RNA sequence: GGGAACGACUCGAGUAGAGUCGAAAAGUGGAGAGAAUCCGAUCUCGAGCAUCCCGUGGAAACCGUUCAGGAUGCUUCAGACGAUACGGCAUCCGAGAGCCAAGAGGUUCUCGACGGUGAAGAAAACCUUCUCCGUUUAUUUCGAUAAACGGAGAAGAAAAGAAACAACAACAACAAC
Reactivity to 2A3 in 0.01 (KOAc 150mM, MgCl2 10mM, bicine 150mM(pH8.5), 24C), signal-to-noise 3, nucleotides 027 to 126: g070u070g020g100a030g010a030g060a130a110u050c060c040g040a130u030c010u010c000g010a000g000c000a030u010c010c000c000g020u080g050g090a100a150a020c030c000g030u050u070c100a080g020g000a010u000g020c000u070u020c030a080g030a190c040g010a010u090a120c040g010g000c000a000u010c000c010g000a010g000a000g000c000c020a170a080g140a150g180g000u000u000c000u000c010g000a030c010g030g010u020g020a050a060g090a030a180a000a000c000
Reactivity to DMS in 0.01 (KOAc 150mM, MgCl2 10mM, bicine 150mM(pH8.5), 24C), signal-to-noise 4, nucleotides 027 to 126: g000u000g020g000a200g000a140g010a080a090u000c120c100g010a070u000c020u000c050g000a160g000c010a090u000c000c000c010g000u000g030g000a140a200a060c030c050g000u000u010c150a170g000g000a030u000g010c000u000u000c150a110g000a100c190g000a100u010a050c110g010g000c040a010u000c010c000g030a020g000a010g020c000c020a170a190g010a120g030g010u000u000c000u000c020g000a030c030g000g020u000g000a130a130g010a110a070a060a150c190